[RMDB]
RNA sequence: GGGAACGACUCGAGUAGAGUCGAAAAAGUCUCUCCCACAUGAAAGCGAAGUCCCCGUGGAGCUUUACUGCAGCCUGUAGCUGUGACGCGAUUUUUAAUGCGUAGGGUAGGAAGGAGCCGUAGAUGUUUCAUAGUGUUGGUUCGCCAACACUAUGAAAAAAGAAACAACAACAACAAC
Reactivity to 2A3 in 0.01 (KOAc 150mM, MgCl2 10mM, bicine 150mM(pH8.5), 24C), signal-to-noise 5, nucleotides 027 to 126: a010g090u020c010u020c010u010c020c080c000a010c020a020u180g060a090a040a020g010c030g050a010a010g050u040c000c000c000c000g040u060g030g050a020g010c000u050u040u060a050c030u050g000c000a010g030c020c030u160g070u220a040g010c020u030g050u060g070a000c010g000c000g010a050u030u000u020u100u280a150a090u190g000c020g000u020a080g020g020g040u060a050g000g040a030a060g010g010a010g010c020c010g030u030a030g030a130u130g100u020
Reactivity to DMS in 0.01 (KOAc 150mM, MgCl2 10mM, bicine 150mM(pH8.5), 24C), signal-to-noise 4, nucleotides 027 to 126: a150g010u000c030u000c050u000c010c000c000a100c170a070u020g010a060a040a050g010c030g010a120a150g020u010c020c020c000c040g010u000g020g010a140g020c030u000u000u000a030c070u010g010c010a070g030c030c050u000g030u020a100g010c020u000g020u010g010a040c040g000c000g040a060u010u020u030u020u010a080a120u030g010c010g010u000a050g000g000g020u000a070g010g010a060a060g010g010a070g030c050c030g010u010a020g020a080u010g010u000